[RMDB]
RNA sequence: GGGAACGACUCGAGUAGAGUCGAAAAUCUAAAUAACCAAUCUUGUCUAAUAAAAGUAGAUGAUUCAAUAUCAUGUUCUAAUCUUUUAAUGUAAUAACUGAUAACAUAAUCUUCAUAUCCUUGACUAAUUACAAUGCUAUUCAAGAAAGCAAAACAACUGUACCUCAGGUUUCGACCUGAGGUACAGAAAAGAAACAACAACAACAAC
Reactivity to 2A3 in 0.01 (KOAc 150mM, MgCl2 10mM, bicine 150mM(pH8.5), 24C), signal-to-noise 1, nucleotides 027 to 156: u110c000u050a060a000a060u170a110a120c020c010a030a170u020c070u040u100g000u000c050u030a000a080u050a170a240a050a000g050u100a090g030a030u010g000a020u120u000c020a120a030u000a000u090c010a030u160g030u000u040c050u070a190a260u140c010u000u160u060u160a190a230u160g030u070a110a130u020a170a030c050u050g030a020u020a000a010c020a030u110a150a020u050c000u090u080c050a020u050a070u250c000c020u050u070g130a000c000u030a100a080u120u010a000c000a030a000u030g000c030u010a020u130u050c100a100a070g070a090a110a000g110c060a040a140a130a000c070a070a120

The record gives the reactivity of an RNA of 207 nucleotides to 2A3. Reactivities are given for positions 27 through 156.